[RMDB]
RNA sequence: GGGAACGACUCGAGUAGAGUCGAAAAGUAAAGCGCGAGGGCUGGUGAGGAUUUGGAGGCGUGAGAGAGAUUCUAGGGAUCCUGCCUCCUCCCUCUCCGCGCGGCGCCUCCUAGCCGAUAUAAAAAAUCGAUGUCAAUAGUUCGCUAUUGACAUCGAAAAAGAAACAACAACAACAAC
Reactivity to DMS in 0.01 (KOAc 150mM, MgCl2 10mM, bicine 150mM(pH8.5), 24C), signal-to-noise 2, nucleotides 027 to 126: g000u000a080a120a260g000c030g000c030g010a100g010g020g010c070u010g000g000u000g010a030g000g010a080u010u010u000g010g000a030g000g010c000g020u010g010a110g010a070g010a210g010a030u000u000c050u010a170g010g030g000a010u000c020c010u000g000c000c000u000c010c000u000c180c020c000u010c010u000c000c020g010c000g010c020g010g000c030g000c000c010u000c020c030u000a080g000c100c090g000a070u020a050u010a000a030a120a070a080a090
Reactivity to 2A3 in 0.01 (KOAc 150mM, MgCl2 10mM, bicine 150mM(pH8.5), 24C), signal-to-noise 2, nucleotides 027 to 126: g040u090a090a090a030g000c020g000c020g070a280g060g160g050c120u170g050g020u050g030a000g050g000a020u300u060u170g000g000a020g000g000c010g000u200g030a090g010a000g000a010g010a080u030u070c060u240a230g000g140g000a000u000c010c000u020g000c000c010u000c010c000u020c000c000c000u000c000u000c000c000g030c020g000c000g000g030c020g000c020c000u000c000c000u030a080g090c020c070g080a030u040a000u140a240a100a010a010a010a020